[RMDB]
RNA sequence: GGGAACGACUCGAGUAGAGUCGAAAAUACGUACCAUCCGAGUGCGUUGUUACGGGAUGAAGCGCUGAAACGUCCGGCGUGGGAGGAUCUCAAAACGUUUCGUGCACGGUUGCUGCAGUUGAAGCAGCAGUGCGCUGGCAUUCGUGCCAGCGCACUGAAAAGAAACAACAACAACAAC
Reactivity to DMS in 0.01 (KOAc 150mM, MgCl2 10mM, bicine 150mM(pH8.5), 24C), signal-to-noise 2, nucleotides 027 to 126: u020a070c060g000u030a080c000c010a120u040c040c090g030a140g000u030g010c000g040u000u010g000u000u010a140c210g000g040g000a070u010g000a080a060g000c120g000c020u000g040a020a050a080c070g000u000c060c040g040g010c040g070u000g010g010g010a260g020g020a090u010c070u060c030a080a150a180a120c080g000u000u000u000c020g060u010g020c060a120c100g010g000u000u000g000c000u000g000c050a100g000u020u040g000a140a090g000c000a020g020
Reactivity to 2A3 in 0.01 (KOAc 150mM, MgCl2 10mM, bicine 150mM(pH8.5), 24C), signal-to-noise 2, nucleotides 027 to 126: u140a000c050g020u000a010c030c010a030u090c050c000g040a010g020u040g000c040g040u030u000g070u070u080a030c050g000g030g000a030u020g110a080a070g000c060g020c020u070g090a140a240a040c050g130u010c040c000g060g000c010g060u010g040g010g010a090g000g020a100u020c030u020c000a050a090a000a010c070g010u060u060u050c050g000u050g020c030a000c090g040g040u090u070g010c010u000g000c000a130g000u120u160g090a070a000g030c000a000g000